[RMDB]
RNA sequence: GGGAACGACUCGAGUAGAGUCGAAAAAUCGUAGAAUCUGGGUAUAGGGGCGAAAGACUAAUCGAACCAUCUAGUAGCUGGUUCCUGCCGAAGUUUCCCUCAGGAUAGCAAAGACUUUUAAAUUAGUAUGAAUCAGAUCAUUCGUGAUCUGAUUCAUAAAAGAAACAACAACAACAAC
Reactivity to DMS in 0.01 (KOAc 150mM, MgCl2 10mM, bicine 150mM(pH8.5), 24C), signal-to-noise 3, nucleotides 027 to 126: a100u010c080g000u030a080g020a100a050u010c040u020g000g010g010u000a030u050a060g000g010g020g010c030g010a040a080a070g020a110c130u000a080a030u010c080g020a090a060c030c020a050u000c030u000a070g000u020a090g050c070u000g010g000u000u000c000c040u010g010c090c040g000a050a060g010u030u010u010c010c010c030u010c080a050g020g010a070u030a080g030c090a030a110a120g000a090c060u000u020u020u010a020a080a080u030u020a070g000u020
Reactivity to 2A3 in 0.01 (KOAc 150mM, MgCl2 10mM, bicine 150mM(pH8.5), 24C), signal-to-noise 4, nucleotides 027 to 126: a000u110c060g000u040a040g030a060a060u020c060u050g040g050g020u090a050u080a180g000g020g000g000c020g060a070a050a010g070a030c070u110a020a100u050c070g020a040a020c000c000a010u020c020u020a050g050u050a000g120c050u010g060g060u040u030c010c000u020g080c030c020g010a070a010g020u020u050u030c000c000c000u020c040a030g040g000a030u080a010g000c020a070a120a070g010a070c030u000u040u090u180a080a180a090u110u050a040g040u020
Structure probing data (DMS and 2A3) for a 177-nucleotide construct.
The reactions ran in a buffer of 150 mM KOAc, 10 mM MgCl2 and 150 mM bicine (pH 8.5), at 24 C.